[RMDB]
Conditions: 150 mM KOAc, 10 mM MgCl2 and 150 mM bicine (pH 8.5), 24 C. The record gives the reactivity of an RNA of 177 nucleotides to DMS.
RNA sequence: GGGAACGACUCGAGUAGAGUCGAAAAGAUAUGGAGUACGUAAUCGAGUCGCUGAUGACCCAUAGUAACAAGUGUCGGAAACGACACCGCCCUAUGGCAAGGCGUCUCGAUUACGUACUCCUAAGUCCAAUAUAGGAGGCUUCGGCCUCCUAUAUUGAAAAGAAACAACAACAACAAC
Reactivity to DMS in 0.01 (KOAc 150mM, MgCl2 10mM, bicine 150mM(pH8.5), 24C), signal-to-noise 6, nucleotides 027 to 126: g000a100u000a300u000g010g000a010g020u000a010c000g010u000a020a010u000c000g010a010g020u000c000g050c000u000g010a090u020g000a100c300c000c010a000u000a010g000u010a050a110c200a280a090g000u000g010u000c000g010g000a160a100a280c000g010a010c000a000c000c070g020c300c190c010u000a000u000g010g000c020a070a090g000g000c010g010u000c000u000c000g000a000u000u000a000c000g010u000a000c000u000c010c000u000a010a050g000u010c030
Record summary:
For DMS the reverse transcriptase was MarathonRT. It was measured as part of the RMDB library TTRINS.